[RMDB]
RNA sequence: GGGAACGACUCGAGUAGAGUCGAAAACACAGAGACACAGACUGACAGACUGUCAGUCACUCUGACUCAGACUGACUGACUGAGUCACUGACUGACACUCAGUCUCUGACUCACUGAGUCACUGACAAUGAUGCUUUCUAUUCGUAGAAAGCAUCAUAAAAGAAACAACAACAACAAC
Reactivity to DMS in 0.01 (KOAc 150mM, MgCl2 10mM, bicine 150mM(pH8.5), 24C), signal-to-noise 9, nucleotides 027 to 126: c080a170c120a070g000a040g010a100c080a090c140a040g000a040c030u000g010a040c180a100g010a130c220u000g000u000c000a010g000u000c010a010c050u000c060u000g010a040c040u000c000a010g010a100c060u010g010a080c210u010g010a070c030u000g000a020g010u000c000a000c080u000g000a010c010u000g000a040c060a060c110u010c010a030g010u000c000u000c090u000g010a070c020u000c020a120c120u010g010a060g010u000c030a110c080u010g000a080c240a130
Reactivity to 2A3 in 0.01 (KOAc 150mM, MgCl2 10mM, bicine 150mM(pH8.5), 24C), signal-to-noise 8, nucleotides 027 to 126: c070a000c010a020g040a000g040a050c020a020c020a110g030a020c020u030g020a020c020a070g130a100c080u070g010u010c000a000g000u000c000a000c010u060c010u010g010a010c000u000c010a020g020a140c030u120g070a060c040u080g020a030c000u010g000a040g000u000c000a000c090u000g010a010c000u010g010a010c000a020c060u020c000a000g000u000c000u000c000u020g010a020c000u010c020a100c060u100g050a010g030u040c030a040c100u100g060a030c050a040